[RMDB]
Chemical mapping of a 177-nucleotide RNA with 2A3 and DMS. For 2A3 the reverse transcriptase was SuperScript II with manganese.
RNA sequence: GGGAACGACUCGAGUAGAGUCGAAAAAUGUACCAGUUAUUCGAGUGACAAAUUUAGCUAAAACUAUCGAUGAACUAAAAGAUAAUGGCUUUUGGGUAGCUGGCACUGAAGCUAAUAAUGCAACAGAAGUGCUCCAGUAUUUCGAUACUGGAGCACUAAAAGAAACAACAACAACAAC
Reactivity to 2A3 in 0.01 (KOAc 150mM, MgCl2 10mM, bicine 150mM(pH8.5), 24C), signal-to-noise 2, nucleotides 027 to 126: a000u120g010u020a020c010c000a000g040u100u020a000u030u000c000g030a010g040u160g030a070c020a140a140a120u110u130u080a040g020c040u120a030a070a060a260c090u030a080u140c040g090a070u160g150a040a080c010u110a080a010a000a040g040a000u050a030a020u220g000g000c000u040u190u140u060g060g000g030u000a000g000c000u020g010g040c000a000c080u040g010a070a000g000c000u000a000a020u070a220a060u280g040c070a080a020c000a080g050a180
Reactivity to DMS in 0.01 (KOAc 150mM, MgCl2 10mM, bicine 150mM(pH8.5), 24C), signal-to-noise 2, nucleotides 027 to 126: a110u090g000u000a010c000c000a020g010u030u000a000u000u000c010g000a110g010u010g000a090c040a160a040a170u000u000u000a000g000c030u000a020a050a050a160c110u010a160u000c100g000a110u040g000a070a300c060u000a020a010a030a070g020a120u020a050a260u030g000g020c050u000u000u000u000g000g000g020u000a000g070c000u000g010g020c150a050c000u000g030a120a120g000c040u000a020a040u000a000a070u000g030c150a100a210c090a020g000a160
Conditions: 150 mM KOAc, 10 mM MgCl2 and 150 mM bicine (pH 8.5), 24 C. DMS adducts were read by reverse transcription with MarathonRT. The data come from the RNA Mapping Database (RMDB), library OK1LIB.